The record gives the reactivity of an RNA of 207 nucleotides to 2A3. Source: RMDB library M2RFPK, as collected in RNAgym.

RNA sequence: GGGAACGACUCGAGUAGAGUCGAAAAAGCCAUACCAUUACGAUGGUAUGGCAAGUCCGUGACGGCGAUGGAUCCCGCCUGGCAGAUGCCGAACUGCCGAUCUGGCUGAUGGUUCCUGCCCCGUCAAAAAACGUAAAGCACUUCGGUGCUUUACGAACGGCAUGAAUUACUUCGGUAAUUCAUGCCGAAAAGAAACAACAACAACAAC
Reactivity to 2A3 in 0.01 (KOAc 150mM, MgCl2 10mM, bicine 150mM(pH8.5), 24C), signal-to-noise 1, nucleotides 027 to 156: a000g000c000c000a000u010a010c000c000a020u060u040a020c300g070a030u020g000g000u000a000u000g000g000c000a000a020g020u000c010c010g040u070g000a000c020g000g000c100g000a030u080g000g010a020u000c010c010c000g000c020c010u050g000g000c010a010g050a030u270g130c040c030g070a170a130c010u020g000c010c010g040a280u110c110u140g030g000c070u110g030a140u140g020g000u000u010c000c000u050g050c000c000c000c000g000u000c000a000a000a000a120a000a000c020g000u000a000a000a000g000c000a000c010u030u080c210g110g040u020g000c000u020u000u000a000c010g000a040a020